Structure probing data (DMS and 2A3) for a 177-nucleotide construct. Source: RMDB library OK2TRN, as collected in RNAgym. In probing experiments dimethyl sulfate is read out at A N1 and C N3, which are open when not base-paired.
RNA sequence: GGGAACGACUCGAGUAGAGUCGAAAAUAUGGCUUGGAAGAUCUACAGCCGCUAUUGAAGGAGUAUUUCCCAUAGUGGACCAAGUCACUCGUAUGAGGGUAGUUAAUGCCUUAGUAGCAUCUCAUCCGUUGUACCCACCAUUCGUGGUGGGUACAACAAAAGAAACAACAACAACAAC
Reactivity to DMS in 0.01 (KOAc 150mM, MgCl2 10mM, bicine 150mM(pH8.5), 24C), signal-to-noise 2, nucleotides 027 to 126: u000a090u000g010g010c000u000u020g010g030a230a160g000a120u000c040u000a040c040a160g020c010c010g020c030u000a010u010u010g010a120a070g030g050a030g010u020a080u010u000u010c020c000c020a030u010a000g050u000g000g000a130c020c000a000a020g010u000c010a050c030u000c020g010u010a070u010g000a020g000g000g000u000a010g000u030u000a070a110u000g010c020c000u000u010a120g020u000a050g010c090a090u000c040u000c070a060u010c110c080
Reactivity to 2A3 in 0.01 (KOAc 150mM, MgCl2 10mM, bicine 150mM(pH8.5), 24C), signal-to-noise 2, nucleotides 027 to 126: u110a010u010g010g000c020u010u030g040g040a180a060g060a220u090c040u100a030c050a040g050c000c010g020c010u020a030u050u160g150a150a050g010g050a060g090u200a300u140u240u010c010c020c000a000u000a000g020u010g010g020a050c010c000a010a000g000u000c000a000c020u050c080g130u160a070u300g050a070g000g060g000u060a030g090u060u130a090a100u100g000c000c010u070u000a020g060u070a020g000c020a100u010c030u000c010a060u060c000c040